[RMDB]
RNA sequence: GGGAACGACUCGAGUAGAGUCGAAAAAGAAAUGAGAAUGCUGUGUCUGCGGUCAGAGAUGAACACAUUCUUGUUGGAUUGAAAAGAAAGCAGAUACAAAAGGAAAUGGAGAAACAUCUGGCUGUUCACCUAGUUCAUUCUUCGGAAUGAACUAGGUAAAAGAAACAACAACAACAAC
Reactivity to DMS in 0.01 (KOAc 150mM, MgCl2 10mM, bicine 150mM(pH8.5), 24C), signal-to-noise 3, nucleotides 027 to 126: a080g000a080a040a040u020g000a040g000a040a030u000g010c150u010g010u000g010u000c000u000g030c050g010g010u000c060a050g030a120g010a070u010g010a160a050c110a070c040a050u010u000c020u000u010g010u000u000g030g010a110u000u000g000a030a040a070a120g010a080a040a090g030c020a040g000a070u000a030c080a030a040a060a040g000g000a050a070a060u000g010g000a110g030a120a080a060c110a030u010c040u010g000g000c020u000g000u000u020c110
Reactivity to 2A3 in 0.01 (KOAc 150mM, MgCl2 10mM, bicine 150mM(pH8.5), 24C), signal-to-noise 3, nucleotides 027 to 126: a010g100a020a040a020u080g000a030g020a060a000u050g010c080u020g070u010g040u040c010u060g110c030g020g010u080c040a030g030a020g000a100u100g110a090a000c020a010c010a050u020u010c010u040u040g060u050u030g050g050a090u080u230g060a080a060a040a010g060a040a040a000g060c040a010g030a040u050a060c050a030a090a000a030g050g010a070a130a000u100g060g020a100g030a060a090a010c050a040u050c010u010g030g050c010u020g080u080u080c000